[RMDB]
RNA sequence: GGGAACGACUCGAGUAGAGUCGAAAAAGCCACUACGGUGGCAACCGCGGGCGCGCUCCUGACCGCGGGUUCCGAGUUGGGCGUGGAGGUUACCUGGGACUGUGCGGUUGGGACGGCGCCCGUGGAACACUAAAUGUCGAUUCGUCGACAUUUAGUGAAAAGAAACAACAACAACAAC
Reactivity to 2A3 in 0.01 (KOAc 150mM, MgCl2 10mM, bicine 150mM(pH8.5), 24C), signal-to-noise 9, nucleotides 027 to 126: a000g010c010c000a010c010u040a020c240g120g000u000g000g000c010a010a020c000c000g010c000g000g000g000c010g000c040g030c090u000c000c000u010g010a000c000c000g000c010g000g000g000u000u000c010c000g040a080g080u150u150g100g040g020c120g020u140g090g180a130g040g070u150u100a080c010c020u040g010g000g000a000c010u050g140u230g300c010g010g000u000u010g000g000g000a010c020g030g010c000g000c010c000c000g000u000g000g000a010a000
Reactivity to DMS in 0.01 (KOAc 150mM, MgCl2 10mM, bicine 150mM(pH8.5), 24C), signal-to-noise 3, nucleotides 027 to 126: a110g010c010c010a010c010u000a090c110g030g020u000g000g010c010a030a030c010c000g000c000g010g000g000c000g020c000g010c300u020c010c000u010g000a030c000c000g020c000g010g000g020u000u000c000c000g010a070g000u000u010g000g000g010c020g020u010g020g000a100g000g000u000u030a040c040c020u010g000g010g000a010c020u020g020u020g030c000g000g000u000u010g000g000g000a000c060g010g010c010g000c010c010c000g000u000g000g000a100a140